The record gives the reactivity of an RNA of 177 nucleotides to DMS and 2A3.

RNA sequence: GGGAACGACUCGAGUAGAGUCGAAAAGGCCACUGUGAACCCUGCCGCCUGCCGGAACACUCUUCGCUCCGGACCAGCUCAGCCUCUGAUAAGCUGGACUCGGCACGCCCGCAACAAGCACCGAGGAGAUUGCAACACGAUUCGUCGUGUUGCAAUCAAAAGAAACAACAACAACAAC
Reactivity to DMS in 0.01 (KOAc 150mM, MgCl2 10mM, bicine 150mM(pH8.5), 24C), signal-to-noise 2, nucleotides 027 to 126: g010g040c030c020a020c090u020g040u050g000a090a090c080c050c000u000g000c000c040g000c100c010u040g000c020c050g040g000a100a110c150a060c090u010c070u000u000c100g050c040u000c000c000g020g000a160c040c030a030g000c010u010c080a070g000c010c060u000c110u000g000a070u030a100a160g000c000u000g000g010a060c020u000c000g010g000c090a040c040g000c020c010c020g000c110a080a080c150a120a070g020c050a110c040c010g000a070g000g010a130
Reactivity to 2A3 in 0.01 (KOAc 150mM, MgCl2 10mM, bicine 150mM(pH8.5), 24C), signal-to-noise 4, nucleotides 027 to 126: g060g020c040c000a050c040u070g010u030g080a050a090c010c000c010u050g010c010c010g010c020c010u020g010c020c000g020g030a050a010c040a030c050u070c030u130u080c080g020c020u000c000c020g030g030a050c000c010a000g010c010u010c010a020g030c020c010u070c040u060g080a090u050a160a020g000c000u030g020g000a060c010u000c020g000g000c000a030c030g020c000c010c010g040c010a020a110c020a120a010g030c010a010c040c050g010a010g030g020a060
Conditions: 150 mM KOAc, 10 mM MgCl2 and 150 mM bicine (pH 8.5), 24 C. It was measured as part of the RMDB library RFM100. The DMS profile rests on 2,953 reads.